[RMDB]
RNA sequence: GGGAACGACUCGAGUAGAGUCGAAAAAUAUGCACUGCUGGCAUCCCUGCGGGUGAUCAACAACUCACUGUCGGCCACCUUCCGAGUAGGUUCCGGUGCGACGAUGAUCGGUGCCAGCUUGUCGCUGCAUGUGCCUGACUUUCGAGUCAGGCACAUGAAAAGAAACAACAACAACAAC
Reactivity to DMS in 0.01 (KOAc 150mM, MgCl2 10mM, bicine 150mM(pH8.5), 24C), signal-to-noise 3, nucleotides 027 to 126: a080u010a020u010g030c000a040c030u000g020c010u000g010g010c010a030u000c000c060c060u000g010c110g030g010g010u010g000a110u000c110a070a070c140a070a180c140u000c040a060c090u020g000u000c040g010g000c020c000a040c020c000u010u020c110c040g020a120g010u000a160g000g010u000u000c180c080g000g000u000g000c050g000a030c110g000a090u000g010a060u010c130g030g020u000g000c020c010a020g010c020u010u000g010u010c090g020c020u000g010
Reactivity to 2A3 in 0.01 (KOAc 150mM, MgCl2 10mM, bicine 150mM(pH8.5), 24C), signal-to-noise 2, nucleotides 027 to 126: a020u160a050u110g000c000a010c020u020g000c000u000g000g000c000a030u040c010c030c030u040g050c100g010g010g020u060g020a060u080c050a020a160c010a040a060c030u000c030a070c040u080g000u050c010g050g040c000c010a020c000c000u070u040c030c050g120a160g130u300a060g120g000u050u060c050c050g000g000u030g040c050g030a020c020g020a060u040g000a030u100c080g000g000u000g000c000c000a000g000c000u000u060g000u000c040g000c050u040g000
Source information
An RNA of 177 nucleotides, treated with DMS and 2A3 and read out base by base. The 2A3 profile rests on 2,095 reads. For DMS, 2,613 sequencing reads were counted. Source: RMDB library OK2TST, as collected in RNAgym. Conditions: 150 mM KOAc, 10 mM MgCl2 and 150 mM bicine (pH 8.5), 24 C.